[RMDB]
RNA sequence: GGGAACGACUCGAGUAGAGUCGAAAAUUGGCAUUCUUGAAAGAAUUCAAAUGAACUAUAAUGUAUAUUCAAACUUUGAAGAAUACCGUGAAAAUAUUAGAGUUACUGCCUUCAUGUAGUCUUCUGUUGAUCAUUAGUAUUUUUUUCUCAGAUGCAAUGAUUAAAUGCAUUUCGAUGCAUUUAAUCAAAAAGAAACAACAACAACAAC
Reactivity to DMS in 0.01 (KOAc 150mM, MgCl2 10mM, bicine 150mM(pH8.5), 24C), signal-to-noise 2, nucleotides 027 to 156: u000u000g020g020c030a050u000u000c000u000u000g000a040a040a060g010a090a130u000u000c070a070a090a160u010g000a070a090c060u010a160u000a100a090u000g020u000a110u000a070u000u000c030a100a100a180c030u020u000u000g010a020a050g010a060a010u000a000c020c040g050u000g000a060a080a070a120u010a050u000u020a050g010a120g000u000u000a050c060u000g010c030c080u010u000c070a050u000g020u000a040g020u000c040u000u000c040u000g010u000u000g010a090u000c040a040u000u000a070g020u000a010u000u000u000u000u000u000u000c020u000c060a120g000a080u000g030c060a060a210
Reactivity to 2A3 in 0.01 (KOAc 150mM, MgCl2 10mM, bicine 150mM(pH8.5), 24C), signal-to-noise 4, nucleotides 027 to 156: u090u050g080g000c020a010u130u070c100u050u080g030a030a040a050g020a070a030u080u070c060a090a040a080u070g020a050a020c040u080a060u130a300a110u140g060u050a170u050a100u170u070c030a030a040a050c030u140u170u170g020a020a010g000a020a000u040a040c090c070g020u020g040a020a040a040a050u160a100u200u260a050g030a020g120u110u090a060c050u090g050c030c010u010u040c040a020u050g010u020a020g030u010c000u030u000c030u050g030u060u040g030a060u030c020a020u030u050a010g030u050a060u020u000u030u020u000u050u030c050u030c060a040g010a030u030g030c010a070a050
The data come from the RNA Mapping Database (RMDB), library OK3TST.
This 207-nucleotide RNA was probed chemically with DMS and 2A3.
The RNA was probed in 150 mM KOAc, 10 mM MgCl2 and 150 mM bicine (pH 8.5) at 24 C.
Values cover nucleotides 27 to 156.
The 2A3 profile rests on 2,490 reads.
2A3 adducts were read by reverse transcription with SuperScript II with manganese.